[RMDB]
RNA sequence: GGGAACGACUCGAGUAGAGUCGAAAACAGUCAGGUCGAGCGCAUUCUCGAUGAUUAUGGGCUCGGUGCGACCUCGUGGCCUGACGAUCUCGUCGAAAACGACACCGACCGGCUGCUGCUUGCGCUGCUGCUCGAGCAGCGCGGGCAGAACGCCCUCGUUCGUCAGUAUCUUCGGAUACUGACGAACAAAAGAAACAACAACAACAAC
Reactivity to 2A3 in 0.01 (KOAc 150mM, MgCl2 10mM, bicine 150mM(pH8.5), 24C), signal-to-noise 2, nucleotides 027 to 156: c020a000g000u040c040a070g040g000u030c000g040a000g020c020g000c050a080u100u030c030u010c050g020a010u090g030a060u090u120a180u300g040g010g020c010u020c010g000g000u200g030c120g050a200c000c020u110c040g090u200g030g000c010c010u020g090a020c110g000a010u030c060u020c060g040u020c040g040a000a060a090a120c000g140a080c050a070c090c050g000a000c000c040g000g010c010u050g000c020u000g000c000u040u000g020c010g000c010u000g000c000u050g010c110u080c250g150a000g010c020a020g000c000g000c000g000g020g020c000a000g000a000a020c020g060c020c010c020u030c070